Source: RMDB library OK1LIB, as collected in RNAgym. Structure probing data (2A3) for a 177-nucleotide construct. The 2A3 profile rests on 631 reads.
[RMDB]
RNA sequence: GGGAACGACUCGAGUAGAGUCGAAAACAUCAGGCAUUUAAGGAUACCAUGCCCUCGGCACCCACUUCGGUACGUCGAGUUUUCUACAGCUGGUGGAAUUCCAAGUGGGAGUCCUUCGCCAACAACCUCGCCUGGGAUCAUUCGUGAUCCCAGGCGAAAAAGAAACAACAACAACAAC
Reactivity to 2A3 in 0.01 (KOAc 150mM, MgCl2 10mM, bicine 150mM(pH8.5), 24C), signal-to-noise 2, nucleotides 027 to 126: c010a040u140c010a010g000g000c020a020u000u050u300a090a030g040g000a010u000a120c020c000a050u150g080c000c030c060u020c020g020g040c000a020c000c000c020a050c040u070u030c120g010g000u070a130c080g040u000c000g050a000g000u000u000u030u020c160u060a130c110a160g000c000u170g000g090u040g050g050a100a000u150u000c000c000a000a050g030u050g010g070g000a020g090u020c000c000u050u040c030g060c050c000a110a080c080a030a020c050c000